Chemical mapping of a 177-nucleotide RNA with 2A3 and DMS. The data come from the RNA Mapping Database (RMDB), library RFM100. Conditions: 150 mM KOAc, 10 mM MgCl2 and 150 mM bicine (pH 8.5), 24 C.

RNA sequence: GGGAACGACUCGAGUAGAGUCGAAAACCGCCGCCCCGCGCAGGGGCGACGCUGAUAGACCGUUAGCGCAACAGGUUCAACGACGAAGCGCGGAUCACCGACAAAAAACCCACGCCCCCGCGAGCCAAUAGCAAUACAGGUUCGCCUGUAUUGCUAUAAAAGAAACAACAACAACAAC
Reactivity to 2A3 in 0.01 (KOAc 150mM, MgCl2 10mM, bicine 150mM(pH8.5), 24C), signal-to-noise 4, nucleotides 027 to 126: c010c000g040c020c020g000c000c000c000c000g060c010g080c230a060g000g000g000g000c000g000a000c010g000c030u090g050a080u060a080g080a040c020c020g030u050u090a020g020c040g000c040a070a060c020a120g010g050u120u100c030a110a040c090g110a010c040g040a080a020g030c030g000c010g030g010a010u040c020a000c020c010g060a050c080a010a070a020a040a040a070c000c000c000a030c030g020c000c000c000c000c000g040c030g020a010g000c010c000a040
Reactivity to DMS in 0.01 (KOAc 150mM, MgCl2 10mM, bicine 150mM(pH8.5), 24C), signal-to-noise 3, nucleotides 027 to 126: c070c000g030c110c010g020c000c020c000c000g020c300g000c160a120g000g000g020g020c010g040a010c050g000c040u000g000a080u050a070g000a120c020c030g000u000u020a060g010c030g000c040a080a140c110a060g010g000u000u040c080a130a070c050g010a080c080g030a070a120g020c030g030c030g010g020a110u010c030a080c070c000g030a060c100a000a070a080a080a100a060c040c000c020a060c060g010c040c000c000c020c020g020c030g000a100g000c040c060a080